[RMDB]
RNA sequence: GGGAACGACUCGAGUAGAGUCGAAAAGCUUGGCGAUACCCCAACAAAUUGGUUUUGAAUUUGCCGAACAUAUUCGAUACAUUCAGAAUUUGGUGGCUACGACGGGAUUCGAACCUGUGACCCCAUCGCGAAAUAUUAGUUUCGACUAAUAUUUCGCAAAAGAAACAACAACAACAAC
Reactivity to 2A3 in 0.01 (KOAc 150mM, MgCl2 10mM, bicine 150mM(pH8.5), 24C), signal-to-noise 3, nucleotides 027 to 126: g040c040u040u100g030g000c030g030a050u070a120c020c020c010c010a000a040c010a020a130a110u160u130g080g000u070u070u040u180g020a040a030u050u020u130g000c000c000g020a070a010c030a100u230a100u040u080c000g020a020u040a110c040a100u050u090c010a080g060a060a040u080u100u120g060g010u050g030g000c050u040a040c060g080a020c040g020g000g010a040u040u080c020g020a070a060c020c020u030g040u060g120a080c040c000c000c000a070u140c060
Reactivity to DMS in 0.01 (KOAc 150mM, MgCl2 10mM, bicine 150mM(pH8.5), 24C), signal-to-noise 3, nucleotides 027 to 126: g020c040u000u010g000g020c010g020a120u000a110c100c030c010c050a070a130c060a050a060a100u020u010g010g030u000u010u000u010g000a030a040u000u010u000g020c060c020g000a060a180c270a070u000a080u000u010c020g000a060u000a060c160a050u010u000c050a090g000a030a030u000u000u000g030g030u000g000g000c060u000a070c100g010a090c120g010g020g000a140u000u000c040g000a050a070c010c000u000g020u000g000a170c060c040c010c020a060u010c150